[RMDB]
RNA sequence: GGGAACGACUCGAGUAGAGUCGAAAACACUUUCGCCGGGUUGAAGAGUGGGUCAAGCGAGGAGGGAGCGGACAAUCGGACACUCGUAUUCAAAGCAGCUACUUGGCCAGCUGCCGGGCAUAAAAACCAGCAUUACCGUAUUCGUACGGUAAUGCUGAAAAGAAACAACAACAACAAC
Reactivity to 2A3 in 0.01 (KOAc 150mM, MgCl2 10mM, bicine 150mM(pH8.5), 24C), signal-to-noise 5, nucleotides 027 to 126: c070a000c020u060u110u090c020g040c060c020g030g020g050u030u120g090a140a090g040a090g080u110g010g020g000u010c000a020a020g040c040g070a060g030g020a080g030g040g000a030g020c030g050g000a020c020a020a090u100c020g050g000a020c020a010c060u040c020g060u070a100u140u180c080a080a090a000g000c000a000g020c000u040a030c040u060u080g040g000c020c000a000g000c000u000g000c000c010g020g000g000c050a060u200a090a130a010a000a020c040
Reactivity to DMS in 0.01 (KOAc 150mM, MgCl2 10mM, bicine 150mM(pH8.5), 24C), signal-to-noise 2, nucleotides 027 to 126: c130a110c120u020u010u020c090g000c010c030g000g000g080u040u050g000a190a060g000a040g030u000g000g000g010u020c040a080a190g000c080g010a080g020g030a130g000g020g010a060g020c000g020g020a030c070a010a050u020c070g040g000a110c090a050c050u030c030g000u010a030u020u030c110a060a090a120g000c000a000g000c010u000a100c060u030u000g000g000c040c090a030g000c000u010g040c000c100g030g010g010c110a030u040a010a070a060a060a100c130